[RMDB]
RNA sequence: GGGAACGACUCGAGUAGAGUCGAAAAGAUAUGGAAUUAUGGGAGCUAAGCACAUUUCCCAUCGAUCAGCUUCGGAAACGAAGCUGGGAGGGAAAUGUGCUUUAGCGAAGAACAUAAUUCCUAAGUCGAUUUACGUACUGUUCGCAGUACGUAAAUCAAAAGAAACAACAACAACAAC
Reactivity to 2A3 in 0.01 (KOAc 150mM, MgCl2 10mM, bicine 150mM(pH8.5), 24C), signal-to-noise 1, nucleotides 027 to 126: g070a000u200a060u220g020g000a000a020u000u010a000u020g000g000g070a070g010c000u010a010a000g050c000a000c020a010u050u000u020c060c000c010a190u300c050g090a100u060c030a000g000c000u000u000c000g000g020a090a110a070c000g000a000a000g000c000u000g000g010g000a090g010g000g000a000a030a000u000g000u010g000c000u010u010u000a000g010c000g050a030a030g020a020a000c010a000u000a000a000u010u030c010c000u030a170a000g170u120c110
Reactivity to DMS in 0.01 (KOAc 150mM, MgCl2 10mM, bicine 150mM(pH8.5), 24C), signal-to-noise 2, nucleotides 027 to 126: g000a120u010a300u010g000g000a020a010u000u000a000u000g000g020g000a150g020c000u010a020a020g000c000a000c000a010u000u010u010c000c000c010a300u000c230g000a070u010c000a000g000c000u000u000c010g030g000a120a100a230c010g010a010a010g020c000u000g020g000g000a050g020g020g000a010a020a030u000g010u010g000c000u010u000u010a000g020c010g000a060a180g000a100a170c000a010u000a020a010u000u000c000c000u010a030a100g010u020c110